[RMDB]
RNA sequence: GGGAACGACUCGAGUAGAGUCGAAAAAGGAAGCCUCAAAACCUGAAUGCAGUUGCAAUACAAGUUGCAUAAACAUCAAUGCAAGCACCAUUAAUUUCUCAGAGCUUUUCUCCUUUCUGCCUGAAAACGGGAUUUUCUCUUUCUUGAGGCAAGAAGAUAGACACAAGAUGUUCGCAUCUUGUGUCUAAAAAGAAACAACAACAACAAC
Reactivity to 2A3 in 0.01 (KOAc 150mM, MgCl2 10mM, bicine 150mM(pH8.5), 24C), signal-to-noise 3, nucleotides 027 to 156: a000g080g010a050a000g000c000c000u030c010a040a040a020a060c000c030u050g090a090a040u050g010c040a010g060u130u030g010c050a070a040u090a170c070a070a060g040u060u020g010c010a020u130a090a180a040c040a070u150c040a020a150u050g030c030a030a060g010c020a020c070c000a030u040u150a070a090u070u300u070c080u020c040a040g020a030g050c020u100u030u020u020c030u060c050c000u050u110u070c040u030g030c020c000u030g070a060a020a000a020c070g000g000g010a040u080u030u190u050c020u010c000u020u140u000c040u040u070g060a010g000g020c020a000a010g020a010a000g020a030
Reactivity to DMS in 0.01 (KOAc 150mM, MgCl2 10mM, bicine 150mM(pH8.5), 24C), signal-to-noise 1, nucleotides 027 to 156: a170g000g020a140a100g000c040c050u000c020a050a020a060a100c050c020u000g000a100a080u000g020c030a230g000u000u000g000c010a050a060u000a120c140a200a170g040u000u000g010c000a060u010a140a100a110c110a040u000c070a070a090u000g040c040a050a090g020c060a040c050c000a150u010u000a060a080u010u000u000c020u010c040a040g000a120g040c040u000u010u000u000c020u000c050c030u010u000u010c010u010g030c030c020u000g030a010a000a030a080c210g000g010g010a130u000u000u000u000c040u000c010u000u010u010c040u010u010g000a070g050g040c020a040a090g020a040a010g000a300